[RMDB]
RNA sequence: GGGAACGACUCGAGUAGAGUCGAAAAUUACUGGUGGUGUCUUUUUUGGCUGUUGCCGACCAGGUCGCUACAGCCUGAGCUGUUACGUCAGCAGCCUGCGCCACACCCAUGCCGGUAAACACCGUUAAAAGACUUAAUCUUUCGAGAUUAAGUCUUUAAAAGAAACAACAACAACAAC
Reactivity to 2A3 in 0.01 (KOAc 150mM, MgCl2 10mM, bicine 150mM(pH8.5), 24C), signal-to-noise 4, nucleotides 027 to 126: u070u030a040c040u060g090g000u050g020g000u010g080u180c050u050u270u130u070u190u140g000g000c000u010g010u020u010g040c050c010g000a010c010c030a070g120g010u050c040g030c180u130a090c060a050g000c020c010u020g000a050g020c040u020g050u160u110a070c070g030u040c030a010g000c000a010g000c020c020u020g020c030g000c000c000a020c010a010c010c000c000a020u100g060c030c000g010g000u020a070a080a040c080a050c050c010g010u030u090a050
Reactivity to DMS in 0.01 (KOAc 150mM, MgCl2 10mM, bicine 150mM(pH8.5), 24C), signal-to-noise 7, nucleotides 027 to 126: u010u010a030c070u000g020g030u000g010g020u000g000u000c030u000u000u000u010u000u010g020g020c010u010g010u010u000g010c100c000g000a100c070c080a080g010g010u000c080g020c090u010a080c150a100g000c020c040u010g000a140g020c070u010g000u000u010a110c090g000u010c070a020g000c000a010g010c010c040u000g020c140g010c060c130a030c050a080c020c030c300a080u010g010c060c000g010g000u000a030a060a110c120a120c020c010g010u010u010a070